Structure probing data (2A3 and DMS) for a 207-nucleotide construct. For 2A3 the reverse transcriptase was SuperScript II with manganese. Values are in units of 0.01, from 0 to 300, in steps of 10. The RNA was probed in 150 mM KOAc, 10 mM MgCl2 and 150 mM bicine (pH 8.5) at 24 C.

RNA sequence: GGGAACGACUCGAGUAGAGUCGAAAAUAUGCAUGAUUGGUCUGACAGGAAUGAGAGGAUGUAGGGGAUGUUGGCAUUCCUACUUCUUGGAGUAGUGAGAGUGUGAUCACAGUGGAAAUCUUAACCACUCGACAGUGGUGCUAUCCAUGGAGAGUAGCAACGUACUGUAUUUCGAUACAGUACGUUGAAAAGAAACAACAACAACAAC
Reactivity to 2A3 in 0.01 (KOAc 150mM, MgCl2 10mM, bicine 150mM(pH8.5), 24C), signal-to-noise 7, nucleotides 027 to 156: u270a060u100g020c040a030u090g010a110u040u110g020g040u060c030u040g040a060c030a070g020g080a080a070u130g020a060g000a010g100g030a040u050g020u060a040g020g030g000g010a030u050g020u080u060g040g000c010a010u070u050c010c000u010a040c030u050u040c030u060u120g050g000a040g030u070a010g010u050g050a050g010a010g030u040g010u040g050a040u090c060a020c020a090g010u030g020g020a040a070a020u030c040u060u060a080a060c010c010a030c020u030c050g080a070c040a060g030u020g040g010u020g020c030u050a040u060c020c010a020u070g030g030a030g020a010g060u110a020g020
Reactivity to DMS in 0.01 (KOAc 150mM, MgCl2 10mM, bicine 150mM(pH8.5), 24C), signal-to-noise 4, nucleotides 027 to 156: u000a050u000g030c020a080u000g010a110u000u000g030g030u000c030u010g010a130c060a120g010g020a090a090u010g010a150g010a120g000g010a050u000g030u000a070g010g010g030g020a110u000g010u000u000g020g010c060a090u000u000c020c010u000a050c040u000u000c040u000u000g000g000a070g010u000a060g030u010g020a110g020a070g020u000g000u000g000a070u000c040a050c050a120g010u000g020g010a050a090a100u000c090u000u000a070a110c010c000a020c000u000c060g010a090c130a080g030u000g010g010u000g020c080u000a080u000c020c020a080u000g000g010a150g010a100g040u000a090g010